Chemical mapping of a 207-nucleotide RNA with 2A3 and DMS.
DMS adducts were read by reverse transcription with MarathonRT.
The reactions ran in a buffer of 150 mM KOAc, 10 mM MgCl2 and 150 mM bicine (pH 8.5), at 24 C.
Source: RMDB library OK3TST, as collected in RNAgym.
In probing experiments dimethyl sulfate is read out at A N1 and C N3, which are open when not base-paired.
The 2A3 profile rests on 1,742 reads.
RNA sequence: GGGAACGACUCGAGUAGAGUCGAAAAUGGGUGUGGACUGCUCUUUCCAUGCCCAAGCACAGGUAAUAGAAAGUGACAAGAUGUUCCAGUUUGGCCAGGGUUGUCCUCAUUUCUGAUGGCUUGAAUCUGGUGGACAGGUGUUCUGGGAACCAUACCAAAAUUUAAUCCAGUUCGCUGGAUUAAAUUUAAAAGAAACAACAACAACAAC
Reactivity to 2A3 in 0.01 (KOAc 150mM, MgCl2 10mM, bicine 150mM(pH8.5), 24C), signal-to-noise 3, nucleotides 027 to 156: u060g000g000g000u030g010u040g000g030a040c050u080g050c030u060c030u130u080u040c000c000a000u010g000c000c010c010a000a000g010c020a020c010a020g080g070u140a070a050u080a190g100a100a100a010g060u050g060a030c040a050a030g050a090u060g040u080u050c020c000a020g010u040u080u100g040g000c020c020a030g070g000g000u040u060g020u050c020c010u050c020a080u060u170u110c070u070g090a090u100g020g000c000u070u090g040a010a060u030c030u020g030g020u020g000g020a010c010a030g000g060u070g040u090u060c020u020g020g000g040a050a060c030c030a030u140a120c040c080a020
Reactivity to DMS in 0.01 (KOAc 150mM, MgCl2 10mM, bicine 150mM(pH8.5), 24C), signal-to-noise 3, nucleotides 027 to 156: u010g020g020g030u000g030u000g020g050a070c150u010g020c090u000c060u000u000u010c000c010a030u010g020c000c000c000a030a050g000c050a100c100a070g020g030u000a060a120u000a070g010a090a080a080g020u000g010a150c040a100a120g010a090u000g000u000u000c020c020a120g030u020u000u010g030g010c070c030a130g020g020g020u000u000g010u000c040c020u010c040a150u000u000u000c080u000g010a100u010g010g030c060u030u000g020a050a070u000c030u020g030g010u000g020g010a050c030a070g010g020u000g000u000u000c060u000g000g010g000a100a110c060c020a070u000a100c040c030a110